[RMDB]
RNA sequence: GGGAACGACUCGAGUAGAGUCGAAAAAGAUGAUCUGAGUGGAUCCGAGCUAGCGUACGUAGAGCGCUACGUCACCAUGGGUACACAGUACGACUGGAUCUGAUCAGCUAGCUAUCUCAGUACCGUAGCAGACUAAAGUAUUCGUACUUUAGUCUGCAAAAGAAACAACAACAACAAC
Reactivity to DMS in 0.01 (KOAc 150mM, MgCl2 10mM, bicine 150mM(pH8.5), 24C), signal-to-noise 6, nucleotides 027 to 126: a050g000a050u000g010a080u000c010u000g010a050g000u000g010g000a060u010c030c040g010a090g010c070u000a030g010c020g010u000a020c020g020u000a030g010a260g000c250g020c020u000a010c040g030u010c100a110c060c050a090u000g000g000g030u000a030c040a120c140a120g010u000a050c040g000a220c080u000g010g000a040u000c070u000g000a050u010c100a070g000c080u000a040g010c060u000a040u000c020u000c050a090g020u000a130c040c040g000u010a190
Reactivity to 2A3 in 0.01 (KOAc 150mM, MgCl2 10mM, bicine 150mM(pH8.5), 24C), signal-to-noise 6, nucleotides 027 to 126: a000g070a080u130g010a030u030c010u060g040a030g050u100g040g040a040u020c040c040g020a000g000c050u030a010g020c010g070u060a030c010g030u050a050g030a040g110c120g070c100u040a030c030g060u060c040a030c060c030a120u110g090g000g090u120a020c300a010c060a080g020u050a010c090g100a100c090u050g010g000a030u020c020u030g020a070u040c020a010g010c020u040a020g000c020u030a030u100c020u000c040a020g020u060a070c010c060g060u050a020